[RMDB]
RNA sequence: GGGAACGACUCGAGUAGAGUCGAAAACGUGACGGUCAGUUCAAAUUCGGGUUGGUUAGCGGGUGCGAGGUCGUGCUGCGUCUGUGUUGUCAUGGGUAUGUCUCCGUCAAUAAAAACGCCAGCGGCGUGCUAUUAAUCGAUUCGUCGAUUAAUAGCAAAAAGAAACAACAACAACAAC
Reactivity to DMS in 0.01 (KOAc 150mM, MgCl2 10mM, bicine 150mM(pH8.5), 24C), signal-to-noise 8, nucleotides 027 to 126: c090g020u000g010a050c060g010g000u010c050a070g010u000u010c090a070a080a170u000u010c090g010g000g010u000u000g010g000u000u010a060g020c100g010g000g020u010g010c070g010a070g010g010u010c050g020u000g010c050u000g010c060g000u000c040u000g020u010g010u010u000g010u000c070a080u000g010g000g010u000a070u000g010u000c030u000c020c040g000u000c070a050a080u000a050a050a050a100a070c040g010c020c020a090g010c130g010g020c070g010
Reactivity to 2A3 in 0.01 (KOAc 150mM, MgCl2 10mM, bicine 150mM(pH8.5), 24C), signal-to-noise 3, nucleotides 027 to 126: c020g040u040g020a010c020g000g060u050c030a050g000u050u140c040a050a120a070u150u100c020g000g050g000u020u060g060g000u080u100a050g040c070g070g020g000u040g000c040g020a060g000g070u070c040g040u060g010c030u030g000c000g030u030c050u050g100u020g050u080u080g000u040c040a070u070g030g060g000u080a060u180g060u000c020u020c060c000g050u070c020a060a040u120a130a100a020a000a010c020g020c050c000a060g110c060g070g020c000g010